[RMDB]
RNA sequence: GGGAACGACUCGAGUAGAGUCGAAAAGUGGACGCUGCCUGGCCAGCGGCAGGCCGCACUGCGCGUCAGGAACGGCGCCACCCGCGCCGUACGCGAUAUCUGGCGCGCCGGCCGGCGCGCGUCGCGAAGUAGGAUAUGACUUCGGUCAUAUCCUACUAAAAGAAACAACAACAACAAC
Reactivity to DMS in 0.01 (KOAc 150mM, MgCl2 10mM, bicine 150mM(pH8.5), 24C), signal-to-noise 1, nucleotides 027 to 126: g030u070g030g000a060c000g040c000u020g050c050c000u010g080g010c000c010a140g020c050g000g050c040a100g020g010c020c000g000c060a190c300u000g020c000g010c000g010u000c020a040g030g000a160a050c000g000g020c000g020c000c120a260c260c270c060g000c020g000c010c010g040u000a020c150g070c070g020a080u020a120u010c020u020g010g050c000g110c050g000c040c300g000g000c020c000g000g000c300g150c220g020c010g030u010c040g080c020g040a070

Chemical mapping of a 177-nucleotide RNA with DMS. The RNA was probed in 150 mM KOAc, 10 mM MgCl2 and 150 mM bicine (pH 8.5) at 24 C.